The record gives the reactivity of an RNA of 207 nucleotides to 2A3 and DMS. It was measured as part of the RMDB library RNAMAK. Values are in units of 0.01, from 0 to 300, in steps of 10. For 2A3 the reverse transcriptase was SuperScript II with manganese. Reactivities are given for positions 27 through 156.

RNA sequence: GGGAACGACUCGAGUAGAGUCGAAAAAGUCUUUCGAGACUAUUAGCGAUAUGGACUUGGAUUUAAGGCAAUUCUUUACGUAACAUCUAUUCGGAAACGAAUAGUGGUAAAGUUAUGCCUUUGUCAGUCCUAAGUCUCUGGUAUCCUUCGGGAUAAAAUGACAUUUAUUAUUCGUAAUAAAUGUCAUAAAAGAAACAACAACAACAAC
Reactivity to 2A3 in 0.01 (KOAc 150mM, MgCl2 10mM, bicine 150mM(pH8.5), 24C), signal-to-noise 6, nucleotides 027 to 156: a000g030u030c020u060u120u130c170g050a020g010a010c030u030a130u190u160a050g080c070g040a040u030a080u240g010g000a010c010u110u130g150g010a050u300u300u140a010a000g000g000c020a070a270u210u020c000u000u010u010a010c020g040u050a090a050c020a150u060c020u010a000u000u000c010g010g070a090a060a050c000g000a000a010u000a000g000u010g000g000u000a000a000a000g010u050u050a100u140g000c000c000u000u000u000g000u010c000a000g000u000c000c000u000a020a010g010u000c000u000c020u090g110g030u040a030u030c000c000u030u100c280g130g010g010a020u090a070a140a010
Reactivity to DMS in 0.01 (KOAc 150mM, MgCl2 10mM, bicine 150mM(pH8.5), 24C), signal-to-noise 4, nucleotides 027 to 156: a080g030u000c020u010u000u000c150g020a050g030a030c020u000a070u000u000a120g020c090g000a140u000a270u000g010g010a030c010u000u000g030g010a050u000u000u010a010a010g030g030c010a030a300u000u000c000u010u000u000a010c010g030u000a080a070c090a060u000c000u000a000u000u000c000g010g010a160a120a190c020g010a010a020u000a000g020u010g000g010u000a000a000a020g010u000u000a170u000g010c030c010u000u000u010g000u000c020a050g010u000c010c000u010a020a110g010u000c010u000c010u010g020g010u000a060u000c010c000u000u010c190g040g000g020a050u000a010a060a120